[RMDB]
RNA sequence: GGGAACGACUCGAGUAGAGUCGAAAAUUUUUUAACGUGUAUUCUGAAAGUUAACUGUGCCAGUGAUGAAUCCAACCAGCAAAUUAAUGGCUUCUGUCAGUGUACUUGGGCCUUUGGCCGUAGUGAUUUCUGAGAAGACACUGGAUAAGCAGGAGGAUCCUAAAAUAGGGUUCGCCCUAUUUUAGGAAAAAGAAACAACAACAACAAC
Reactivity to 2A3 in 0.01 (KOAc 150mM, MgCl2 10mM, bicine 150mM(pH8.5), 24C), signal-to-noise 1, nucleotides 027 to 156: u110u100u060u020u040u150a160a080c050g020u060g030u020a230u030u100c110u110g130a080a040a000g080u150u110a110a060c020u040g100u120g010c000c000a030g020u000g030a070u040g060a060a080u000c010c010a020a150c020c020a040g100c030a040a040a180u230u050a100a140u150g000g010c000u000u020c000u080g210u110c010a000g030u000g010u090a030c000u010u010g120g020g000c030c000u070u140u300g040g050c010c000g030u040a030g000u020g090a100u040u300u140c020u000g020a030g000a080a000g020a000c020a000c020u040g020g000a110u050a130a000g000c020a000g030g090a000g070g100a070
Reactivity to DMS in 0.01 (KOAc 150mM, MgCl2 10mM, bicine 150mM(pH8.5), 24C), signal-to-noise 1, nucleotides 027 to 156: u000u000u000u000u000u000a080a090c100g010u000g040u000a080u010u000c030u000g010a110a050a080g010u010u000a040a120c040u020g000u000g010c000c040a130g060u000g010a100u000g020a080a110u000c010c110a110a120c080c030a050g000c030a070a070a090u000u000a030a030u020g010g030c020u000u000c050u010g000u000c020a090g020u000g030u000a040c030u010u040g040g040g010c020c020u000u010u010g050g040c000c010g050u000a010g030u010g010a130u010u000u010c000u000g000a160g010a030a060g010a090c020a010c020u000g010g020a040u010a050a180g000c040a090g020g000a160g030g000a050
Source: RMDB library OK3TST, as collected in RNAgym. This 207-nucleotide RNA was probed chemically with 2A3 and DMS. In probing experiments dimethyl sulfate is read out at A N1 and C N3, which are open when not base-paired. Values are in units of 0.01, from 0 to 300, in steps of 10. The reactions ran in a buffer of 150 mM KOAc, 10 mM MgCl2 and 150 mM bicine (pH 8.5), at 24 C.